[RMDB]
RNA sequence: GGGAACGACUCGAGUAGAGUCGAAAAUUAAAUGGUGUUAGGGAGAAUGUAUUCAAUAUUAGCAAAACUGUUCCUUUACUCAUUCAAGGAUAAGAAUAUGGUGUAAUUGAUCUCAGCAUUAAGGUAGGACUGUUACGAUGUUCGCAUCGUAACAGUCAAAAGAAACAACAACAACAAC
Reactivity to DMS in 0.01 (KOAc 150mM, MgCl2 10mM, bicine 150mM(pH8.5), 24C), signal-to-noise 2, nucleotides 027 to 126: u020u000a070a090a110u010g000g010u010g000u000u010a030g000g010g000a040g000a140a060u000g010u000a050u000u000c110a060a030u000a080u020u030a130g020c070a040a050a140a280c070u000g010u000u000c000c010u010u000u000a080c170u010c130a120u000u020c080a020a100g000g000a040u010a080a050g000a050a030u000a010u000g000g010u000g000u000a060a040u000u000g020a040u000c040u000c090a080g000c060a020u000u000a020a070g010g020u000a140g010
Reactivity to 2A3 in 0.01 (KOAc 150mM, MgCl2 10mM, bicine 150mM(pH8.5), 24C), signal-to-noise 1, nucleotides 027 to 126: u120u030a030a020a050u070g040g000u010g050u080u090a040g030g030g020a030g080a060a110u050g020u050a070u060u040c030a050a040u030a100u170u040a080g060c020a000a000a000a190c050u050g090u040u070c000c000u030u020u050a090c110u140c080a100u100u070c020a000a010g050g000a030u060a160a040g030a060a010u160a140u080g040g020u020g020u070a020a120u040u040g060a050u000c040u000c040a020g000c020a020u080u010a040a080g080g000u060a090g040
Annotation
The record gives the reactivity of an RNA of 177 nucleotides to DMS and 2A3. DMS (dimethyl sulfate) methylates the pairing face of unpaired adenines and cytosines. The data come from the RNA Mapping Database (RMDB), library OK2TST. Conditions: 150 mM KOAc, 10 mM MgCl2 and 150 mM bicine (pH 8.5), 24 C. For DMS, 1,153 sequencing reads were counted. 2A3 adducts were read by reverse transcription with SuperScript II with manganese.